[RMDB]
RNA sequence: GGGAACGACUCGAGUAGAGUCGAAAAAGGUGAAAGUUGACGACCUACGUAGGACAAACCGAAGCGAAAGCUGUCGUCCAGUACGUUUCCGGUGAUCAAGGACGUAAGCCGGAGGAGCAAAGGUGAUCAUGUUGAACCUAUUCGUAGGUUCAACAUGAAAAGAAACAACAACAACAAC
Reactivity to 2A3 in 0.01 (KOAc 150mM, MgCl2 10mM, bicine 150mM(pH8.5), 24C), signal-to-noise 5, nucleotides 027 to 126: a000g130g000u100g030a130a060a030g030u080u040g050a050c030g030a020c000c000u020a010c020g030u040a020g020g020a010c040a080a120a000c090c080g050a040a000g020c010g040a110a030a010g010c020u040g060u160c020g020u010c020c010a040g050u050a030c030g000u000u050u000c000c010g000g000u060g000a090u200c040a070a060g170g030a070c080g030u030a030a030g040c000c000g010g000a020g000g040a040g000c050a040a060a010g040g020u050g020a080u030
Reactivity to DMS in 0.01 (KOAc 150mM, MgCl2 10mM, bicine 150mM(pH8.5), 24C), signal-to-noise 7, nucleotides 027 to 126: a060g010g010u000g000a070a090a080g010u020u000g000a140c120g010a070c020c020u000a020c040g020u010a110g020g000a030c050a040a100a120c150c130g020a110a020g010c020g000a060a100a120g010c000u000g010u000c130g010u000c010c000a080g000u010a020c030g000u000u030u000c020c020g000g020u010g010a090u020c090a090a160g020g020a110c100g020u020a100a210g000c020c000g000g000a040g010g010a090g000c130a040a090a060g020g020u000g000a150u010
Background: Structure probing data (2A3 and DMS) for a 177-nucleotide construct. The reactions ran in a buffer of 150 mM KOAc, 10 mM MgCl2 and 150 mM bicine (pH 8.5), at 24 C. For DMS the reverse transcriptase was MarathonRT.